[RMDB]
RNA sequence: GGGAACGACUCGAGUAGAGUCGAAAAGCAAAUCAAGACCAGUACGGAACAUCGAAGAGGCGAAUUACCGUUAGCGGUAAUCAGAUCGUUGUUUCAGAUGCGCCAGAUGAUGCGCUGGAAUCGGGUGUCUACCCGUCGACGCAAGGUUUUAUUGUCGGAAGACAAUGGGUUUCGACCCAUUGUCUUCAAAAGAAACAACAACAACAAC
Reactivity to DMS in 0.01 (KOAc 150mM, MgCl2 10mM, bicine 150mM(pH8.5), 24C), signal-to-noise 2, nucleotides 027 to 156: g000c060a050a110a120u000c090a130a130g000a120c010c040a120g000u000a140c090g010g020a060a010c010a060u000c030g010a080a080g000a140g000g030c040g030a120a040u000u000a020c030c040g030u000u000a250g050c030g020g000u000a010a020u010c050a150g010a080u010c020g010u000u000g000u000u000u000c020a110g000a080u000g010c040g000c050c030a170g000a130u010g010a160u000g030c030g050c010u000g050g010a070a070u000c050g020g020g060u010g030u020c110u000a060c000c000c010g020u000c000g000a050c010g040c020a060a130g010g000u000u000u000u000a050u000u020g010u010c040g010
Reactivity to 2A3 in 0.01 (KOAc 150mM, MgCl2 10mM, bicine 150mM(pH8.5), 24C), signal-to-noise 4, nucleotides 027 to 156: g040c020a000a040a090u110c050a110a010g050a080c010c000a000g010u040a030c070g030g000a030a020c020a010u040c030g030a050a020g030a030g090g060c070g040a070a030u010u000a010c000c000g070u080u170a110g080c040g000g010u000a000a010u030c020a010g040a190u060c020g000u000u030g020u000u030u020c040a040g010a060u070g010c020g040c020c010a050g030a110u160g020a040u100g060c010g000c020u040g020g110a020a090u100c010g000g010g020u050g060u070c030u070a060c000c000c010g010u020c020g020a000c010g000c100a040a080g060g020u010u060u090u080a110u080u140g030u020c020g010
Annotation: This 207-nucleotide RNA was probed chemically with DMS and 2A3. Reactivities are given for positions 27 through 156. For DMS the reverse transcriptase was MarathonRT.